[RMDB]
RNA sequence: GGGAACGACUCGAGUAGAGUCGAAAAGCUGAAAAAAGUAUUGAGAUGAUAAUAGCGAUGAUAGGUGUGUUGAAAGCUGGUGGGGCUUACGUGCCAAUUGAUCCGAACUAUCCAAGUGAUCGUCAGGCCUUGUUGCUACAUUCGUGUAGCAACAAGGAAAAGAAACAACAACAACAAC
Reactivity to DMS in 0.01 (KOAc 150mM, MgCl2 10mM, bicine 150mM(pH8.5), 24C), signal-to-noise 3, nucleotides 027 to 126: g020c030u000g000a000a030a050a100a080a050g000u010a080u000u000g000a120g010a080u000g010a080u000a040a090u020a070g000c070g000a070u010g000a080u000a070g000g010u000g020u020g000u010u020g000a070a050a080g000c020u010g000g020u010g000g000g000g000c080u000u010a040c060g000u010g000c000c050a090a060u030u030g000a030u030c000c000g020a050a090c100u010a040u000c060c060a070a070g000u020g030a050u000c040g010u010c100a050g020g000
Reactivity to 2A3 in 0.01 (KOAc 150mM, MgCl2 10mM, bicine 150mM(pH8.5), 24C), signal-to-noise 3, nucleotides 027 to 126: g000c020u020g100a040a020a010a000a060a070g130u220a100u130u200g040a060g030a050u120g030a030u060a150a080u090a190g050c010g060a030u040g020a000u040a030g000g000u020g000u040g040u130u060g090a110a050a000g050c020u040g050g050u090g020g070g000g020c020u000u030a000c030g010u000g040c000c000a050a080u060u240g000a010u050c010c000g050a070a010c020u000a030u030c010c010a170a060g020u050g190a020u010c050g060u030c050a070g100g070
Structure probing data (DMS and 2A3) for a 177-nucleotide construct. For 2A3, 2,438 sequencing reads were counted. The reactions ran in a buffer of 150 mM KOAc, 10 mM MgCl2 and 150 mM bicine (pH 8.5), at 24 C. 2A3 adducts were read by reverse transcription with SuperScript II with manganese. 2A3 is a SHAPE reagent: it acylates the 2'-hydroxyl of flexible nucleotides of all four kinds. For DMS, 5,504 sequencing reads were counted.